RNA sequence: GGGAACGACUCGAGUAGAGUCGAAAAGAAAAUGGAGAGGGAGCAGCUAGGUCUAUGAAUAUGGCUUUGAAAGAUGGAAAUGUUCCAUUAGAAGAAGUAGAUUAUAUAAAUGCUCAUGGAACUUCAACCCAUCAUAGUAGUUCGCUACUAUGAUGGGAAAAGAAACAACAACAACAAC
Reactivity to DMS in 0.01 (KOAc 150mM, MgCl2 10mM, bicine 150mM(pH8.5), 24C), signal-to-noise 5, nucleotides 027 to 126: g010a040a060a100a080u020g010g010a050g000a080g010g000g000a030g010c050a030g000c120u030a040g010g010u010c070u020a060u010g000a060a050u020a060u020g010g000c030u000u010u000g000a060a130a090g010a030u010g000g010a010a130a170u030g010u020u000c000c010a000u000u000a070g010a180a160g000a050a070g000u000a050g010a100u020u030a090u060a090u010a080a070a050u010g010c010u000c010a080u010g000g000a030a050c020u000u010c080a060a130
Reactivity to 2A3 in 0.01 (KOAc 150mM, MgCl2 10mM, bicine 150mM(pH8.5), 24C), signal-to-noise 6, nucleotides 027 to 126: g040a000a050a020a010u130g010g010a050g020a040g030g090g010a030g030c040a010g000c010u090a040g020g050u000c030u040a050u100g090a120a030u160a090u150g050g010c010u060u060u050g090a120a080a050g050a040u050g020g070a040a120a120u250g030u100u010c000c020a010u050u050a030g070a140a020g020a080a000g050u120a010g020a120u250u000a050u060a030u030a210a120a030u080g030c010u010c010a020u040g030g000a050a030c000u020u020c020a050a110